Chemical mapping of a 207-nucleotide RNA with DMS and 2A3. DMS adducts were read by reverse transcription with MarathonRT. For DMS, 3,187 sequencing reads were counted. Reactivities are given for positions 27 through 156. 2A3 adducts were read by reverse transcription with SuperScript II with manganese. The 2A3 profile rests on 1,011 reads.
RNA sequence: GGGAACGACUCGAGUAGAGUCGAAAACAGAACUGGAUGGGCCGUGUGCUUAACCAGGACAAGAUCUCCUUCUCUCCAACGUUGUGGCCAACUCAUGAUUCUCCUAACCUGUGCUUGGAGAGACGUGCUACCAUAUAGGUGUUCGCACCUAUAUGAAUAGAGAUCCAGUAUUCGUACUGGAUCUCUAAAAAGAAACAACAACAACAAC
Reactivity to DMS in 0.01 (KOAc 150mM, MgCl2 10mM, bicine 150mM(pH8.5), 24C), signal-to-noise 1, nucleotides 027 to 156: c060a140g010a030a140c030u000g000g020a140u000g010g000g010c000c040g030u030g000u010g000c030u000u000a100a150c030c010a030g000g000a170c080a110a050g000a100u010c010u000c010c040u000u000c010u000c010u000c010c000a030a070c040g000u010u010g020u000g020g000c010c050a080a140c070u010c050a060u000g000a080u000u000c020u000c000c010u000a090a080c040c030u000g030u000g010c060u000u020g010g000a040g000a020g030a040c110g030u000g000c050u000a220c090c000a010u000a000u000a000g020g090u000g010u000u010c300g030c040a020c000c000u010a000u010a010u000g000a040a190
Reactivity to 2A3 in 0.01 (KOAc 150mM, MgCl2 10mM, bicine 150mM(pH8.5), 24C), signal-to-noise 2, nucleotides 027 to 156: c010a000g100a080a090c000u030g000g040a070u020g050g070g000c060c130g290u210g080u190g070c010u030u000a100a100c010c000a030g000g040a000c050a050a130g000a060u070c040u010c000c000u040u000c000u010c000u000c020c010a050a110c160g040u070u090g030u190g090g030c010c030a110a060c100u090c110a130u140g120a160u230u130c160u070c020c080u080a040a120c000c060u160g050u100g020c040u010u040g010g000a010g010a000g000a000c020g050u080g030c020u040a050c010c010a000u000a000u000a000g010g000u030g020u030u060c150g010c090a000c000c000u000a000u000a000u000g000a000a010